[RMDB]
RNA sequence: GGGAACGACUCGAGUAGAGUCGAAAACGGGUGGAUCGACGCUGUCGCAUCCGGCCUGGGCUCAUCGCCGGCGACGAUCAUCGUCGAACCCGAUGCGCUGGCCAUGGCCGACUGCCUGUCGCCUGACGAUACGCGUGAAAUUCGUUUCACGCGUAUCAAAAGAAACAACAACAACAAC
Reactivity to 2A3 in 0.01 (KOAc 150mM, MgCl2 10mM, bicine 150mM(pH8.5), 24C), signal-to-noise 9, nucleotides 027 to 126: c010g000g020g020u040g050g030a110u090c030g010a020c060g070c300u190g010u040c020g000c050a050u030c020c000g000g000c000c010u110g050g030g000c080u100c110a020u020c010g020c040c010g000g020c000g000a010c010g020a110u230c050a100u160c080g020u000c000g010a110a130c010c010c000g000a040u090g000c000g000c010u030g020g000c010c010a070u110g000g000c010c000g020a040c040u050g000c000c010u030g020u030c020g020c020c000u020g020a040c110
Reactivity to DMS in 0.01 (KOAc 150mM, MgCl2 10mM, bicine 150mM(pH8.5), 24C), signal-to-noise 4, nucleotides 027 to 126: c030g000g000g030u010g000g010a070u010c020g020a030c000g020c120u030g010u010c050g010c200a050u010c060c000g030g000c000c010u000g040g050g000c020u050c010a040u000c070g000c010c010g000g000c020g000a100c010g000a160u050c200a140u010c030g020u010c010g030a120a130c230c030c010g020a090u020g030c040g020c050u000g010g020c010c030a180u010g000g000c010c030g000a160c110u010g000c010c010u010g000u000c090g010c000c010u010g010a150c160
Source information
An RNA of 177 nucleotides, treated with 2A3 and DMS and read out base by base. For DMS the reverse transcriptase was MarathonRT. Source: RMDB library OK1LIB, as collected in RNAgym.